[RMDB]
RNA sequence: GGGAACGACUCGAGUAGAGUCGAAAAGUGACAGGAGAGGAAAUUGCCUAAAUAAGAGAACCUCCUCUCUGCCAGUAACUUACAGGGGGCCAUGGGGUUUUUCUCUCAUUAAGUCCAUCUGCCUGGGGCACCAAAAUUUAUUCGUAAAUUUUGGUGCAAAAGAAACAACAACAACAAC
Reactivity to 2A3 in 0.01 (KOAc 150mM, MgCl2 10mM, bicine 150mM(pH8.5), 24C), signal-to-noise 8, nucleotides 027 to 126: g060u060g030a020c030a060g030g050a010g010a010g000g070a030a060a090u160u170g110c000c020u210a220a200a140u240a140a030g090a010g020a080a050c000c020u020c000c000u000c000u010c010u000g020c010c000a050g040u100a090a050c020u030u080a020c030a010g030g000g000g010g000c040c020a030u070g010g010g000g050u010u040u010u170u070c070u000c000u000c030a010u060u120a090a000g010u000c000c010a110u030c020u030g060c010c010u030g030g000g110
Reactivity to DMS in 0.01 (KOAc 150mM, MgCl2 10mM, bicine 150mM(pH8.5), 24C), signal-to-noise 4, nucleotides 027 to 126: g000u020g020a050c040a110g000g010a010g000a020g010g000a020a020a080u020u030g010c080c010u020a040a090a120u070a130a090g000a070g000a110a160c230c070u000c020c000u000c030u010c010u010g010c060c100a090g000u010a090a130c070u020u030a110c130a040g000g010g000g010g010c150c100a070u010g010g000g000g010u010u020u010u050u020c040u020c010u010c020a060u020u020a060a090g010u000c020c020a070u010c040u010g010c000c010u000g000g020g010